[RMDB]
RNA sequence: GGGAACGACUCGAGUAGAGUCGAAAAAUGGUAGUUACUCUACUCGCUAUCCUAGUUACUUUGGAGUAAUCUAAAGUGUGUGUAAACGGGCGAAAGUCUGUAAAAUACUGGGGACAUAGGGUCAACAAGAACUAGUAGACCUUCGGGUCUACUAGAAGUUAUAGCUGCUGUUCGCAGCAGCUAUAACAAAAGAAACAACAACAACAAC
Reactivity to 2A3 in 0.01 (KOAc 150mM, MgCl2 10mM, bicine 150mM(pH8.5), 24C), signal-to-noise 2, nucleotides 027 to 156: a000u130g060g010u060a100g050u110u070a030c000u050c000u000a000c000u000c000g010c040u050a040u110c000c000u010a010g040u020u080a020c010u050u020u000g020g020a060g010u100a110a120u000c000u030a000a000a020g030u050g010u010g010u020g040u080a130a150a000c010g030g000g000c030g040a090a020a030g000u000c010u010g010u030a050a080a060a000u140a060c060u010g030g000g010g010a000c020a070u120a050g070g000g000u050c020a030a010c010a060a060g080a070a020c000u000a000g000u000a000g000a010c010c000u000u020c160g110g000g000u000c000u000a000c000u000a000g010a000a000
Reactivity to DMS in 0.01 (KOAc 150mM, MgCl2 10mM, bicine 150mM(pH8.5), 24C), signal-to-noise 1, nucleotides 027 to 156: a160u000g040g020u000a060g010u000u000a040c010u000c010u000a020c030u090c030g060c040u030a050u000c030c050u000a020g020u000u000a010c020u000u000u010g000g000a030g020u000a150a130u000c000u000a040a020a000g030u000g030u000g000u000g000u000a060a240a080c050g020g020g010c000g020a100a110a200g000u030c020u000g010u000a030a060a080a090u000a030c070u000g000g010g040g010a090c100a080u000a110g010g030g020u000c070a070a070c070a080a120g010a060a250c000u000a020g010u000a000g000a000c000c010u000u000c300g090g020g040u010c000u010a000c000u010a000g000a020a070